Structure probing data (2A3) for a 207-nucleotide construct.
For 2A3, 1,012 sequencing reads were counted.
The reactions ran in a buffer of 150 mM KOAc, 10 mM MgCl2 and 150 mM bicine (pH 8.5), at 24 C.
RNA sequence: GGGAACGACUCGAGUAGAGUCGAAAAGGGGUCGCUAUUAAGACAGACAGCACUUAUAUUUUGUUUUGCCUUGGAUUUAUAGGCUGAAGCCUCCACGGCCUAUUGUCAGGCAAAACAAAAUAUAAGGCUGUCAAUGACGAUAGCGACGGAGGCACCCGCAGUACGCAUAGUUCGCUAUGCGUACUGCAAAAGAAACAACAACAACAAC
Reactivity to 2A3 in 0.01 (KOAc 150mM, MgCl2 10mM, bicine 150mM(pH8.5), 24C), signal-to-noise 1, nucleotides 027 to 156: g060g030g000g000u020c000g000c030u000a000u050u040a180a060g090a080c010a010g070a010c000a010g000c020a120c300u030u000a020u010a080u000u000u000u000g010u000u000u000u000g010c010c040u090u150g210g000a020u300u270u000a030u040a030g000g000c000u000g130a160a030g030c000c040u020c000c000a040c000g030g010c010c020u000a000u010u000g020u000c050a060g000g040c000a000a000a000a000c000a000a000a000a000u000a000u000a000a010g000g000c000u000g030u000c000a000a020u110g020a030c030g000a000u080a000g000c000g010a020c000g000g010a010g020g010c060a050c050c070c000